[RMDB]
RNA sequence: GGGAACGACUCGAGUAGAGUCGAAAAUUAAAGAAUUGUCGUUGGGAUGCUACGCAAUUAAAUACAUGUGUGACGUGUAUUUGCGAACGACGUAAUUCAUUAGCAGAAAGAUCAAAAGAUCAAAAAAUCACUCAUUAAAGUUCGCUUUAAUGAGUGAAAAAGAAACAACAACAACAAC
Reactivity to DMS in 0.01 (KOAc 150mM, MgCl2 10mM, bicine 150mM(pH8.5), 24C), signal-to-noise 4, nucleotides 027 to 126: u000u010a060a090a140g010a060a040u000u010g010u000c000g010u000u000g000g010g030a130u000g010c080u000a120c050g010c040a080a090u000u000a080a070a000u010a000c010a010u010g020u000g020u010g020a050c020g030u000g000u000a000u000u000u000g010c010g000a090a060c010g000a010c020g000u000a030a030u000u000c070a080u000u010a040g000c110a080g020a080a090a110g000a020u000c010a070a070a060a100g000a030u030c020a000a010a090a040a100a080
Reactivity to 2A3 in 0.01 (KOAc 150mM, MgCl2 10mM, bicine 150mM(pH8.5), 24C), signal-to-noise 4, nucleotides 027 to 126: u090u050a070a090a020g020a010a040u040u040g020u040c000g010u010u020g120g060g060a060u140g030c040u050a030c020g000c010a010a050u200u110a070a040a020u020a000c020a010u030g060u020g120u170g250a050c010g000u000g020u000a000u020u030u050g000c000g000a020a000c000g000a010c000g020u010a010a000u060u030c060a030u030u090a000g000c030a020g130a110a170a000g020a020u020c020a050a200a220a130g010a020u060c020a050a040a060a000a010a190